[RMDB]
RNA sequence: GGGAACGACUCGAGUAGAGUCGAAAACGAUCACAUCCCUCAUUUCAUCUUUCGGGUCUUCAGCUUGCCUCGCCUGAAUCACUGCACUCGUGUGGUGAGCGGGGGCUGCAUGGCUACAAACGGAAAUUCAUACUUGUAAGUUCGCUUACAAGUAUGAAAAAGAAACAACAACAACAAC
Reactivity to 2A3 in 0.01 (KOAc 150mM, MgCl2 10mM, bicine 150mM(pH8.5), 24C), signal-to-noise 6, nucleotides 027 to 126: c030g030a090u130c050a020c020a180u040c020c010c000u020c050a100u030u150u070c040a050u020c050u040u140u100c050g050g000g000u010c000u040u020c030a000g010c010u100u190g080c020c000u020c010g080c020c030u110g080a080a050u030c000a000c010u020g010c010a010c020u090c130g110u020g000u020g020g010u010g010a010g010c020g010g010g000g000g000c000u010g030c020a040u030g050g000c010u070a110c130a030a060a010c010g030g010a000a000a030u010
Reactivity to DMS in 0.01 (KOAc 150mM, MgCl2 10mM, bicine 150mM(pH8.5), 24C), signal-to-noise 4, nucleotides 027 to 126: c080g000a070u000c120a100c120a130u010c020c030c020u000c100a110u010u000u010c040a080u010c070u000u000u000c080g000g010g010u000c010u010u010c030a030g000c010u000u010g010c020c010u000c050g020c020c190u000g000a090a130u000c000a020c000u000g000c010a040c060u000c300g030u000g030u000g010g010u000g000a020g020c020g000g000g010g000g020c030u000g000c060a030u010g010g010c030u000a080c180a040a070a050c030g000g010a130a070a040u000